Conditions: 150 mM KOAc, 10 mM MgCl2 and 150 mM bicine (pH 8.5), 24 C.
Structure probing data (2A3 and DMS) for a 177-nucleotide construct.
The data come from the RNA Mapping Database (RMDB), library RFM100.
2A3 is a SHAPE reagent: it acylates the 2'-hydroxyl of flexible nucleotides of all four kinds.
The 2A3 profile rests on 2,573 reads.
DMS adducts were read by reverse transcription with MarathonRT.
Reactivities are rounded to 0.1 and cut off at 0 and 3.
[RMDB]
RNA sequence: GGGAACGACUCGAGUAGAGUCGAAAAAGGCGGGGGUUUUGUUCGCAGGCUCCUUCUUCCCGCUCCUGGUUCUACGCGGCGUGCGCUGUACCACCAUCGGUGGUUAUGGCGCUUACCCCGUGAGGGGCAAGAGCCCGAUAUUCGUAUCGGGCUCUUGAAAAGAAACAACAACAACAAC
Reactivity to 2A3 in 0.01 (KOAc 150mM, MgCl2 10mM, bicine 150mM(pH8.5), 24C), signal-to-noise 3, nucleotides 027 to 126: a000g060g000c040g000g030g000g000g050u000u020u100u050g040u030u100c100g050c050a010g020g010c010u010c000c000u020u030c000u040u050c000c000c020g030c000u000c000c000u030g000g010u000u030c010u040a020c020g010c000g020g000c020g020u050g000c010g000c000u010g010u000a000c000c010a010c010c010a300u250c260g000g000u020g010g020u090u040a000u010g010g000c010g000c000u010u050a010c000c010c010c000g040u070g030a040g000g000g000g000
Reactivity to DMS in 0.01 (KOAc 150mM, MgCl2 10mM, bicine 150mM(pH8.5), 24C), signal-to-noise 2, nucleotides 027 to 126: a090g010g020c040g000g020g000g010g020u000u030u020u010g020u000u030c140g020c040a080g000g000c000u010c020c000u030u010c030u000u000c010c040c010g020c020u000c020c010u000g000g010u010u000c000u020a070c020g000c060g000g020c110g030u000g030c020g040c000u010g010u000a020c020c000a000c000c000a120u050c280g010g030u000g010g000u010u020a000u010g010g010c000g030c000u010u020a060c010c010c040c000g000u050g000a100g000g000g000g000